[RMDB]
Chemical mapping of a 177-nucleotide RNA with DMS and 2A3. Values cover nucleotides 27 to 126. The RNA was probed in 150 mM KOAc, 10 mM MgCl2 and 150 mM bicine (pH 8.5) at 24 C. The data come from the RNA Mapping Database (RMDB), library TTRDEL. The DMS profile rests on 1,517 reads. 2A3 is a SHAPE reagent: it acylates the 2'-hydroxyl of flexible nucleotides of all four kinds.
RNA sequence: GGGAACGACUCGAGUAGAGUCGAAAAGAUAUGGAUCGAACUACAGCCGCCCAGCUUUGAUCUCGGAAACGAGGGAGCUGUAACAAGCUGCGAUCCUAAGUCAAAGACGAUUGUUCGCAAUCGUCAACCGUAACAAGUUGUUCGCAACUUGUUACGGAAAAGAAACAACAACAACAAC
Reactivity to DMS in 0.01 (KOAc 150mM, MgCl2 10mM, bicine 150mM(pH8.5), 24C), signal-to-noise 2, nucleotides 027 to 126: g020a030u020a290u000g000g010a000u000c000g000a070a080c140u000a290c030a020g010c010c050g000c300c170c010a010g010c020u000u010u000g000a080u000c010u010c000g010g020a120a030a140c000g010a030g000g000g000a010g010c010u000g020u000a020a120c190a130a090g010c020u000g010c010g000a020u000c000c000u010a010a070g020u000c030a070a100a130g000a000c000g000a020u000u000g010u000u000c250g010c000a030a000u000c000g020u010c010a040a090
Reactivity to 2A3 in 0.01 (KOAc 150mM, MgCl2 10mM, bicine 150mM(pH8.5), 24C), signal-to-noise 3, nucleotides 027 to 126: g030a000u070a030u170g010g000a000u010c010g020a070a060c110u200a090c300a030g000c010c030g120c120c100c000a010g020c010u190u180u110g140a150u120c000u000c000g030g000a030a020a070c010g010a010g010g050g000a000g000c010u000g030u250a290a160c130a170a040g010c010u000g000c000g010a010u000c000c010u000a090a010g030u020c010a170a060a030g010a000c010g010a010u050u010g020u100u080c300g030c150a000a000u000c000g010u010c000a000a020